RNA sequence: GGGAACGACUCGAGUAGAGUCGAAAAGAAAAGAGCGUAAUCGCGUCUUGACGUGAGUGAGACUAGACUGUAGCCUAUCCCAAGUGGGAUAGAAUAUCUCACAAUACGCUGAUCUACAGUCAAAAGAGGCAGGAUACCAUUUCGAUGGUAUCCUGCCAAAAGAAACAACAACAACAAC
Reactivity to 2A3 in 0.01 (KOAc 150mM, MgCl2 10mM, bicine 150mM(pH8.5), 24C), signal-to-noise 2, nucleotides 027 to 126: g250a030a090a000a000g010a010g010c010g010u010a080a030u060c010g000c010g030u040c100u200u290g130a010c010g000u000g000a020g000u010g000a000g010a000c020u010a110g000a020c010u000g000u000a000g000c000c020u000a000u000c010c000c000a030a090g300u300g010g000g000a000u000a000g000a010a010u050a050u060c000u000c020a000c000a000a020u050a010c000g000c010u020g000a010u050c000u000a000c000a000g000u000c030a020a020a020a010g130a000